Overview: Chemical mapping of a 177-nucleotide RNA with DMS and 2A3. Conditions: 150 mM KOAc, 10 mM MgCl2 and 150 mM bicine (pH 8.5), 24 C. The data come from the RNA Mapping Database (RMDB), library RFM100.
RNA sequence: GGGAACGACUCGAGUAGAGUCGAAAAAAAAGGCGCGGGAUAGCGUGCGCUACCGGAUGGCGGGUAACUUAGGAAGCGUUUCUUGAGCUUCCCUGGGAUGAGCGUUUGGGAGAGCUGAUUCUGCAGCUGUCCAAAUUGCUUUCGAGCAAUUUGGACAAAAAGAAACAACAACAACAAC
Reactivity to DMS in 0.01 (KOAc 150mM, MgCl2 10mM, bicine 150mM(pH8.5), 24C), signal-to-noise 2, nucleotides 027 to 126: a020a020a020a080g020g000c030g000c000g000g020g010a140u030a100g000c050g000u030g040c080g000c000u010a140c080c060g030g010a000u000g000g000c060g030g000g000u000a070a060c090u010u000a080g030g020a010a010g010c080g000u010u020u040c150u020u020g030a160g040c010u010u010c020c020c060u000g000g000g000a090u060g000a060g000c020g010u010u000u030g000g000g000a100g000a050g000c050u000g010a120u010u000c060u020g030c000a030g020c040
Reactivity to 2A3 in 0.01 (KOAc 150mM, MgCl2 10mM, bicine 150mM(pH8.5), 24C), signal-to-noise 2, nucleotides 027 to 126: a000a000a000a000g030g000c030g000c010g000g020g020a040u050a020g050c050g000u060g010c070g000c000u040a040c020c010g060g000a120u030g030g000c090g000g060g040u120a070a020c050u060u130a090g030g030a000a000g040c050g030u020u140u090c080u120u110g080a040g000c000u010u000c000c000c000u030g030g000g020a090u120g050a020g070c040g020u050u080u130g020g010g020a050g000a000g000c000u030g020a090u010u020c000u070g030c020a060g000c000